This 177-nucleotide RNA was probed chemically with DMS and 2A3. The reactions ran in a buffer of 150 mM KOAc, 10 mM MgCl2 and 150 mM bicine (pH 8.5), at 24 C. Reactivities are given for positions 27 through 126.

RNA sequence: GGGAACGACUCGAGUAGAGUCGAAAAGAUAUGGAAUCUAUCACGAAGAACUAUACUCCCCACCUCGGAAACGAGAGGUAUAGGGAGUGAUAGAUUCCUAAGUCAAAGUCCAUGUUCGCAUGGACAACUUCCUAAAUCAGUUCGCUGAUUUAGGAAGAAAAGAAACAACAACAACAAC
Reactivity to DMS in 0.01 (KOAc 150mM, MgCl2 10mM, bicine 150mM(pH8.5), 24C), signal-to-noise 4, nucleotides 027 to 126: g010a020u000a050u010g000g000a020a000u000c000u000a010u000c000a010c010g000a090a190g010a120a190c010u000a010u000a000c000u000c020c040c020c040a200c190c010u000c000g000g000a010a010a020c000g020a020g010a130g030g010u000a000u000a010g000g000g000a020g020u000g000a000u000a000g000a020u000u000c000c000u000a000a050g000u010c010a100a110a120g000u000c000c000a020u000g000u000u010c200g020c010a010u000g010g010a010c010a070a070
Reactivity to 2A3 in 0.01 (KOAc 150mM, MgCl2 10mM, bicine 150mM(pH8.5), 24C), signal-to-noise 5, nucleotides 027 to 126: g000a000u020a010u070g000g010a010a000u020c000u020a000u000c010a010c140g300a300a100g010a040a000c020u000a010u010a020c030u160c050c060c030c070a300c150c000u000c000g010g000a000a000a000c000g000a000g000a020g050g020u000a000u010a010g030g000g010a030g000u000g000a000u000a000g010a000u000u000c000c000u000a010a000g010u010c050a180a080a010g000u000c000c010a000u010g050u020u090c290g020c130a000u000g000g010a000c000a000a010